[RMDB]
RNA sequence: GGGAACGACUCGAGUAGAGUCGAAAAGUGAAAGCUCCUUCUCUCGCAAUGUGUAACUCACGAUUCUCAUGACCCCUGGUUGGAGAGAUCCGGACUAGGAGCCAGGGGGCCUCUGAUUCUGCCAGCCAAAACUGUCGUAAGUUCGCUUACGACAGAACCCUCGAAUACUGUUCGCAGUAUUCGAGGGAAAAGAAACAACAACAACAAC
Reactivity to 2A3 in 0.01 (KOAc 150mM, MgCl2 10mM, bicine 150mM(pH8.5), 24C), signal-to-noise 2, nucleotides 027 to 156: g060u060g000a130a030a040g050c000u010c000c020u040u020c010u000c030u030c010g040c040a090a230u120g040u040g040u120a070a070c060u040c020a020c040g100a150u090u060c020u020c050a090u140g080a050c000c000c000c000u000g000g050u030u080g090g040a040g000a000g010a100u010c080c060g120g030a060c060u090a080g060g020a000g020c000c000a000g000g000g010g010g000c000c000u060c040u030g090a210u100u000c010u070g050c020c030a010g000c040c060a050a080a130a140c000u000g000u000c000g000u000a010a010g000u030u040c080g000c110u000u000a000c000g000a000c000a000g000a000a000